Chemical mapping of a 177-nucleotide RNA with DMS and 2A3.
[RMDB]
RNA sequence: GGGAACGACUCGAGUAGAGUCGAAAAUAACAUUCGAACGAAGUAAAAUGUCGACCGGUAAGCCUUCACUAACCUUAAGUGAUAUCGGAAAUGUGUCUGUUAAGUUGGAUAAGGAACUGAACGAAAAGUCUUUACAAUUAUUCGUAAUUGUAAAGACAAAAGAAACAACAACAACAAC
Reactivity to DMS in 0.01 (KOAc 150mM, MgCl2 10mM, bicine 150mM(pH8.5), 24C), signal-to-noise 9, nucleotides 027 to 126: u000a130a080c050a060u000u000c030g020a070a300c050g010a060a040g000u010a070a050a030a050u000g000u010c070g010a100c070c020g000g020u010a060a090g010c060c040u000u000c050a040c020u000a050a060c080c060u000u000a030a030g020u000g010a040u000a020u010c070g000g010a070a080a070u010g010u000g010u000c050u000g000u000u010a040a060g010u000u000g010g010a080u010a040a070g010g010a040a090c100u000g000a070a060c080g000a080a080a080a120
Reactivity to 2A3 in 0.01 (KOAc 150mM, MgCl2 10mM, bicine 150mM(pH8.5), 24C), signal-to-noise 3, nucleotides 027 to 126: u050a020a010c010a040u020u070c040g040a100a080c030g030a090a010g030u110a040a040a070a070u080g040u020c000g030a070c030c000g000g030u010a050a020g040c010c010u000u020c080a040c020u050a050a060c020c030u070u050a080a000g090u070g100a020u010a030u060c020g000g050a000a100a070u180g010u000g020u020c020u010g090u170u050a070a030g010u040u030g020g000a070u010a090a020g020g020a060a040c020u110g060a050a010c040g090a050a060a180a000

Notes:
The 2A3 profile rests on 2,370 reads. The data come from the RNA Mapping Database (RMDB), library OK2TST. In probing experiments dimethyl sulfate is read out at A N1 and C N3, which are open when not base-paired.